[RMDB]
RNA sequence: GGGAACGACUCGAGUAGAGUCGAAAACGGAAGCAUUAAAACCAUUCGAGCUAGUCAAUGCGUGGCGUGUCUCUCCGCAGGGUGUUGGCGAAUGUAAAGAGUGACUAAGCAUGUAGUACCGAGGAUGAUAAGAGCAAUUCGUUCGCGAAUUGCUCAACCUGUUAUUCCAGUUCGCUGGAAUAACAGGAAAAGAAACAACAACAACAAC
Reactivity to DMS in 0.01 (KOAc 150mM, MgCl2 10mM, bicine 150mM(pH8.5), 24C), signal-to-noise 2, nucleotides 027 to 156: c090g000g000a070a090g000c070a090u010u000a070a100a140a060c010c000a130u010u020c030g000a180g030c060u000a110g040u000c030a050a090u000g000c110g030u010g000g020c050g010u010g020u000c070u000c030u020c070c030g000c030a090g010g000g020u000g010u000u010g030g000c000g020a060a040u000g020u000a090a060a110g000a090g020u010g000a120c040u020a070a110g000c080a020u020g010u020a020g020u000a120c000c020g000a080g020g010a130u010g000a150u020a110a110g010a030g020c000a010a010u000u000c000g050u010u010c300g050c000g010a000a030u000u010g010c000u000c000a000a060
Reactivity to 2A3 in 0.01 (KOAc 150mM, MgCl2 10mM, bicine 150mM(pH8.5), 24C), signal-to-noise 3, nucleotides 027 to 156: c020g010g010a050a000g020c020a020u080u120a110a040a040a060c020c010a020u090u120c080g040a030g020c050u040a030g090u050c020a040a050u060g010c050g060u070g050g010c040g020u100g030u010c030u010c000u010c030c020g020c030a040g040g010g030u050g010u030u040g050g000c010g020a100a010u130g050u150a060a080a010g080a010g000u050g010a030c030u040a040a030g050c040a040u080g030u120a040g020u020a060c000c050g000a020g030g020a030u100g030a010u070a170a170g000a000g000c010a000a000u000u000c000g020u010u030c140g000c000g110a000a000u000u000g000c000u000c000a010a000
About this RNA: This 207-nucleotide RNA was probed chemically with DMS and 2A3. In probing experiments dimethyl sulfate is read out at A N1 and C N3, which are open when not base-paired. Source: RMDB library M2RFPK, as collected in RNAgym. For DMS the reverse transcriptase was MarathonRT.